[RMDB]
RNA sequence: GGGAACGACUCGAGUAGAGUCGAAAAAUCUUCACCGUCACGCUGCGCCCGGUCUCAAAUCCCGCUUCUUCCUGGCAGUCGCCGCUGGGGAUUUGUGAGUAACAGGCGGUCAUGCAGGUUUCGCUGUUAACCGAGACCAUUUCGAUGGUCUCGGUUAAAAAGAAACAACAACAACAAC
Reactivity to 2A3 in 0.01 (KOAc 150mM, MgCl2 10mM, bicine 150mM(pH8.5), 24C), signal-to-noise 1, nucleotides 027 to 126: a000u090c030u100u120c060a000c040c000g050u050c080a080c060g110c040u010g020c000g060c010c000c000g050g000u000c030u060c000a000a060a030u050c000c000c000g000c040u140u040c010u120u040c100c000u020g000g000c040a060g030u040c020g070c060c000g000c000u050g000g000g000g000a000u000u010u030g030u030g010a050g010u080a050a000c020a000g090g000c000g030g000u020c020a020u260g020c050a000g000g190u000u000u040c060g000c020u010g000u060

The record gives the reactivity of an RNA of 177 nucleotides to 2A3. 2A3 adducts were read by reverse transcription with SuperScript II with manganese. For 2A3, 521 sequencing reads were counted. Reactivities are given for positions 27 through 126. The reactions ran in a buffer of 150 mM KOAc, 10 mM MgCl2 and 150 mM bicine (pH 8.5), at 24 C.